The record gives the reactivity of an RNA of 177 nucleotides to DMS.
It was measured as part of the RMDB library OK2TRN.
RNA sequence: GGGAACGACUCGAGUAGAGUCGAAAAGUGGCUCCAUGGCUAGUUCGAAAGCCCUGUUCAGAGCUCAGAGAGCAGGUGGGCCUGACCUUCCUGAUCAGUCUGGAGGACAAGUCUAAGACUGAGGAGAGGCAUUAAGCCUCUUCGGAGGCUUAAUGCCAAAAGAAACAACAACAACAAC
Reactivity to DMS in 0.01 (KOAc 150mM, MgCl2 10mM, bicine 150mM(pH8.5), 24C), signal-to-noise 1, nucleotides 027 to 126: g010u000g010g040c030u010c000c040a080u010g010g030c000u000a060g030u000u000c150g010a300a070a080g000c010c010c010u010g030u000u000c110a130g020a090g010c030u000c120a140g020a230g000a040g000c030a070g020g010u000g000g000g000c010c000u000g000a120c100c060u000u000c030c000u030g000a100u000c000a030g040u000c000u000g000g030a140g010g000a120c290a030a110g000u000c000u000a030a030g010a010c000u000g000a050g020g000a080g000a150